[RMDB]
RNA sequence: GGGAACGACUCGAGUAGAGUCGAAAAAUACAUACUGACACCGGUUGCUCAACAGGCUGUGUGGGACAAUAGAAUAACAAGGCUGUCAAUUUGAGCUUGACGGCUGCAAACCGAAUGGACUGAAAUCGUAACCGGACUCACUUCGGUGAGUCCGGAAGUGUAAGAACAAGUUCGCUUGUUCUUACACAAAAGAAACAACAACAACAAC
Reactivity to DMS in 0.01 (KOAc 150mM, MgCl2 10mM, bicine 150mM(pH8.5), 24C), signal-to-noise 2, nucleotides 027 to 156: a140u010a060c050a130u000a110c090u000g020a140c050a070c020c030g020g050u000u000g010c040u000c040a090a100c050a080g020g000c050u000g020u000g030u000g000g010g000a100c080a070a100u010a090g000a090a160u000a100a120c110a100a160g000g030c030u010g010u000c030a030a030u000u000u000g010a150g020c300u000u000g010a060c030g030g030c000u000g000c070a050a070a140c030c030g000a070a100u000g000g030a070c000u020g000a050a060a130u000c080g000u000a120a170c000c000g000g010a020c000u000c000a000c020u010u010c250g060g000u000g000a030g020u000c000c010g020g000a000a020
Reactivity to 2A3 in 0.01 (KOAc 150mM, MgCl2 10mM, bicine 150mM(pH8.5), 24C), signal-to-noise 4, nucleotides 027 to 156: a000u140a010c030a020u080a030c040u090g040a030c020a020c060c030g050g030u060u090g020c040u030c040a060a100c020a070g030g040c040u030g040u020g020u050g090g030g040a010c030a040a060u080a100g120a090a060u140a130a010c070a120a040g030g000c000u000g010u040c020a010a010u100u070u180g030a030g050c000u000u010g010a020c000g010g000c010u010g000c010a050a080a030c030c020g060a050a070u100g030g010a020c050u070g030a060a040a070u130c050g030u050a050a050c010c000g000g000a000c000u010c000a000c000u030u030c040g070g000u010g000a000g000u010c010c000g000g000a000a000

The record gives the reactivity of an RNA of 207 nucleotides to DMS and 2A3.
Source: RMDB library M2RFPK, as collected in RNAgym.
Values cover nucleotides 27 to 156.
Conditions: 150 mM KOAc, 10 mM MgCl2 and 150 mM bicine (pH 8.5), 24 C.